This 207-nucleotide RNA was probed chemically with 2A3. The reactions ran in a buffer of 150 mM KOAc, 10 mM MgCl2 and 150 mM bicine (pH 8.5), at 24 C. For 2A3, 718 sequencing reads were counted. Source: RMDB library OK3TST, as collected in RNAgym.
RNA sequence: GGGAACGACUCGAGUAGAGUCGAAAACAUGGUUCUGCAGUCCCUUUGAUGUGAUGCUCCAUGGAAACUGCCAAUUCUCUCUUCAGAAGAAUGGUCUAAACCCUCUGAGUCUUUCACUAGGCCAAGUAGAUAGGAAAUUCUAUCUGCUUGCUUUAUAGACUCCCAUACGAUUCGUCGUAUGGGAGUCAAAAGAAACAACAACAACAAC
Reactivity to 2A3 in 0.01 (KOAc 150mM, MgCl2 10mM, bicine 150mM(pH8.5), 24C), signal-to-noise 2, nucleotides 027 to 156: c020a020u050g060g000u250u250c140u090g000c070a080g190u140c000c030c070u090u080u120g170a170u100g090u040g020a010u080g000c010u000c010c000a010u040g030g020a140a100a030c060u070g000c000c050a080a190u020u010c010u000c020u010c020u300u180c090a090g020a100a000g010a050a050u030g010g000u050c040u110a100a170a180c060c000c000u020c070u110g030a040g000u000c010u090u090u080c060a100c180u030a050g000g050c080c000a000a000g000u000a000g000a000u000a000g050g090a240a110a110u260u080c000u000a000u000c000u000g000c000u000u000g000c000u020u100u020a210u030a000